The data come from the RNA Mapping Database (RMDB), library TTRDES. Structure probing data (DMS and 2A3) for a 177-nucleotide construct. Conditions: 150 mM KOAc, 10 mM MgCl2 and 150 mM bicine (pH 8.5), 24 C.
RNA sequence: GGGAACGACUCGAGUAGAGUCGAAAAAGAUAUGGACUGUGAGAUAGCUGCUCCGACCCAUCUUGGAUUUAGAGCGUCGGAAACGACGCUCUUGUCAGAUGCGGAGCCGAAACACAGUCCUAAGUCAUCUUUAACACGAGUUCGCUCGUGUUAAAGAAAAAGAAACAACAACAACAAC
Reactivity to DMS in 0.01 (KOAc 150mM, MgCl2 10mM, bicine 150mM(pH8.5), 24C), signal-to-noise 2, nucleotides 027 to 126: a080g010a030u000a300u020g000g000a020c000u020g000u000g010a040g010a110u010a200g010c300u020g000c020u000c000c000g010a260c240c300c040a020u000c000u000u010g020g020a020u010u020u000a010g000a010g020c000g020u000c000g020g000a060a080a170c030g010a000c010g050c000u000c000u000u000g000u000c000a000g040a000u000g020c020g000g000a030g000c000c050g010a120a170a070c010a000c000a000g010u010c000c000u000a030a090g000u000c030a220
Reactivity to 2A3 in 0.01 (KOAc 150mM, MgCl2 10mM, bicine 150mM(pH8.5), 24C), signal-to-noise 1, nucleotides 027 to 126: a000g060a050u080a040u120g000g000a000c010u020g010u020g020a160g080a300u080a190g130c230u140g010c010u050c030c000g100a160c070c100c030a030u050c010u060u300g240g000a110u300u230u280a010g000a000g000c060g000u000c020g010g150a150a060a040c000g030a010c010g000c010u000c000u000u000g000u030c000a030g010a000u010g040c000g000g000a000g000c040c000g000a030a050a000c010a000c000a010g010u020c010c010u000a020a010g020u000c000a030